[RMDB]
RNA sequence: GGGAACGACUCGAGUAGAGUCGAAAAUUCCAUAGGAACACAACAUUGAUUAAUCUUAUUUUUGGUCUCCGUGGCAGGGCCCCUGUGCUUGCGCAUGCCUUGCCACACAGUGUCAUCGGGCUUACACGAGUCCACUAAGAUUCGUCUUAGUGGACUCAAAAGAAACAACAACAACAAC
Reactivity to DMS in 0.01 (KOAc 150mM, MgCl2 10mM, bicine 150mM(pH8.5), 24C), signal-to-noise 2, nucleotides 027 to 126: u000u000c000c000a110u000a130g010g020a060a060c110a060c040a110a100c140a060u010u000g020a150u000u000a050a110u020c120u010u000a110u010u000u000u000u030g040g000u000c030u000c170c130g040u010g000g000c010a010g010g000g010c020c020c070c010u000g000u010g020c010u000u050g020c040g010c010a000u040g020c020c010u000u000g010c010c010a000c000a010c070a100g030u000g010u010c070a090u000c060g000g000g010c060u010u010a050c140a100c100
Reactivity to 2A3 in 0.01 (KOAc 150mM, MgCl2 10mM, bicine 150mM(pH8.5), 24C), signal-to-noise 6, nucleotides 027 to 126: u050u000c010c010a030u110a080g080g020a120a010c030a010c020a130a070c040a110u050u130g080a060u160u160a120a050u080c060u070u180a210u160u150u030u060u100g050g010u040c040u020c110c080g000u000g010g000c010a000g000g000g010c000c000c000c000u000g000u030g000c080u140u100g000c020g010c010a000u160g000c000c000u010u000g010c020c000a000c000a000c000a010g000u010g010u000c000a030u030c030g030g010g020c000u030u050a020c070a010c120
An RNA of 177 nucleotides, treated with DMS and 2A3 and read out base by base. 2A3 adducts were read by reverse transcription with SuperScript II with manganese.